[RMDB]
RNA sequence: GGGAACGACUCGAGUAGAGUCGAAAAGUGGAACUAAUUCAUAUUCAACAGAUAAUCACUGAGCAGCUAUAAAGUUGCAGGCUCUGUUUUUGACCUCAAUAAUCCAGCAGUGAACAAAAUAGACCCCCAUGAGUAGGGGGAAGCAACAAUAAACACAUAACCAUGUGAACUUCGGUUCACAUGGUUAAAAAGAAACAACAACAACAAC
Reactivity to 2A3 in 0.01 (KOAc 150mM, MgCl2 10mM, bicine 150mM(pH8.5), 24C), signal-to-noise 2, nucleotides 027 to 156: g060u070g000g020a080a020c060u030a120a090u210u150c020a040u060a120u210u050c050a020a040c010a100g010a090u070a070a040u140c010a010c040u050g040a050g050c000a000g000c040u070a130u110a300a290a020g010u010u000g020c050a000g000g010c090u020c030u040g130u040u040u000u140u060g060a050c030c010u120c020a010a000u100a050a060u130c020c100a000g000c000a000g020u010g170a000a040c000a040a140a050a050u040a140g010a120c000c000c000c000c000a020u050g040a060g090u110a100g000g030g000g000g000a000a000g040c010a000a070c070a070a070u100a220a090a000c110a000c140a060